[RMDB]
RNA sequence: GGGAACGACUCGAGUAGAGUCGAAAAACGCUCGUAUCGUCGUCACAGUCGAAGGGCGCGAUCUUGAGUUCGACGUAUCGACCUUCGCCCUUGUGGGCCCGCAGCAGCUGCCCGAAGUCGAGCCGUCAGGCUGGGUAAUCUUCGGAUUACCCAGCCUAAAAGAAACAACAACAACAAC
Reactivity to 2A3 in 0.01 (KOAc 150mM, MgCl2 10mM, bicine 150mM(pH8.5), 24C), signal-to-noise 1, nucleotides 027 to 126: a000c060g050c030u020c010g090u110a070u040c000g180u030c010g000u030c010a020c060a130g140u090c080g110a120a040g060g050g000c010g030c000g030a020u030c020u090u230g030a060g050u090u120c050g030a000c010g050u030a050u070c030g010a030c000c020u110u080c070g030c030c050c030u110u110g130u140g000g000g000c090c050c040g010c010a130g060c010a020g000c010u060g030c000c060c020g020a020a000g050u040c000g020a000g020c020c010g050u040c060
Reactivity to DMS in 0.01 (KOAc 150mM, MgCl2 10mM, bicine 150mM(pH8.5), 24C), signal-to-noise 2, nucleotides 027 to 126: a100c110g000c000u000c030g010u000a040u000c020g020u000c020g040u000c090a120c130a100g020u000c060g010a060a080g000g010g020c000g010c080g020a040u010c090u000u020g000a050g020u000u010c060g020a050c040g020u000a050u000c020g000a040c040c060u000u000c040g000c080c030c020u000u000g010u020g010g000g000c030c080c060g020c120a070g030c130a100g020c040u000g000c000c010c000g000a060a060g010u000c020g010a020g020c060c000g010u010c070